[RMDB]
RNA sequence: GGGAACGACUCGAGUAGAGUCGAAAACGAGAUCAUCGACGGUGCCGCGUCGGGGCUCAUCGACACCGCCUGUAUCUGUCCGACCGUUUCCAGUUGCGGCACAGUGACGUUGAGGACGGCGAUGGUGCCGUUCAUCCACCUUCGGGUGGAUGAACGGAAAAGAAACAACAACAACAAC
Reactivity to 2A3 in 0.01 (KOAc 150mM, MgCl2 10mM, bicine 150mM(pH8.5), 24C), signal-to-noise 3, nucleotides 027 to 126: c030g020a010g030a160u070c040a020u080c070g000a010c030g000g060u020g020c000c010g010c010g030u030c000g000g000g070g030c020u020c040a090u060c080g050a030c020a040c040c040g060c010c040u120g010u070a070u060c020u030g040u040c040c030g020a140c040c050g030u050u080u080c020c020a030g010u140u100g070c000g020g000c020a010c020a030g080u130g060a020c050g030u060u110g030a040g080g030a010c010g000g000c020g030a100u090g000g060u010g040
Reactivity to DMS in 0.01 (KOAc 150mM, MgCl2 10mM, bicine 150mM(pH8.5), 24C), signal-to-noise 3, nucleotides 027 to 126: c110g000a070g000a080u000c070a060u000c070g010a020c010g020g020u000g010c000c020g010c030g010u000c010g000g000g000g010c030u010c020a060u000c050g010a120c040a080c050c120g010c080c030u010g020u000a050u000c050u020g000u000c080c060g010a090c070c070g010u000u000u020c060c020a090g020u010u000g010c030g000g000c020a030c050a130g000u000g000a140c060g000u000u020g010a120g000g000a130c020g000g000c020g010a050u000g020g010u000g020

Annotation:
Chemical mapping of a 177-nucleotide RNA with 2A3 and DMS. Conditions: 150 mM KOAc, 10 mM MgCl2 and 150 mM bicine (pH 8.5), 24 C.